[RMDB]
Conditions: 150 mM KOAc, 10 mM MgCl2 and 150 mM bicine (pH 8.5), 24 C. Chemical mapping of a 177-nucleotide RNA with 2A3. Values cover nucleotides 27 to 126. Source: RMDB library OK1LIB, as collected in RNAgym.
RNA sequence: GGGAACGACUCGAGUAGAGUCGAAAAUGAAACAGUGCUGGAUAUCGUUAAAUCUGAUGAUGGCUUCACCAUCACGACUUCUCAAGCUCAGCAUCAGACCAAAACCAUUAUCAUCGCCAUGGGAGGCCGCCAGUGCGUCGUUCGCGACGCACUGGCGAAAAGAAACAACAACAACAAC
Reactivity to 2A3 in 0.01 (KOAc 150mM, MgCl2 10mM, bicine 150mM(pH8.5), 24C), signal-to-noise 1, nucleotides 027 to 126: u130g000a000a030a000c000a040g020u020g090c000u010g070g070a110u030a060u180c100g010u150u260a000a180a060u050c000u100g030a120u030g000a050u070g090g000c000u080u110c100a030c040c020a010u090c090a060c020g070a080c040u140u050c070u010c040a070a100g040c030u080c160a010g000c000a000u100c000a100g130a040c000c000a000a090a000a030c000c000a030u030u050a000u170c100a000u100c090g000c030c000a000u030g000g010g020a060g090g000c030